[RMDB]
RNA sequence: GGGAACGACUCGAGUAGAGUCGAAAAGGCAAGGACUCAGGAACAGCAGCAAAAAUAACAGCAACUAUUUAGUAUUGCAGGCCAGAUCCAAGACUCAGAAACCGGAUGAUAUCUCCAACAGUGCUCAAGUGCAUGUGGCCACUAAAAAACCUGAUGACGUGCUAUGCACGUUCGCGUGCAUAGCACGAAAAGAAACAACAACAACAAC
Reactivity to 2A3 in 0.01 (KOAc 150mM, MgCl2 10mM, bicine 150mM(pH8.5), 24C), signal-to-noise 1, nucleotides 027 to 156: g040g000c050a040a010g000g000a020c080u040c070a010g110g000a090a100c020a040g070c010a020g000c070a040a000a070a100a000u160a040a090c030a010g030c000a000a020c000u090a070u060u290u030a040g000u050a070u050u170g040c000a010g020g100c030c010a000g010a030u060c030c020a040a010g020a060c010u050c070a000g000a180a180a060c100c110g030g000a020u000g010a000u010a090u150c050u000c000c000a060a060c060a080g020u030g050c020u070c080a130a050g030u000g020c020a010u030g050u010g040g060c000c010a030c080u130a030a000a000a060a000a030c040c010u050g010a100u110g010a030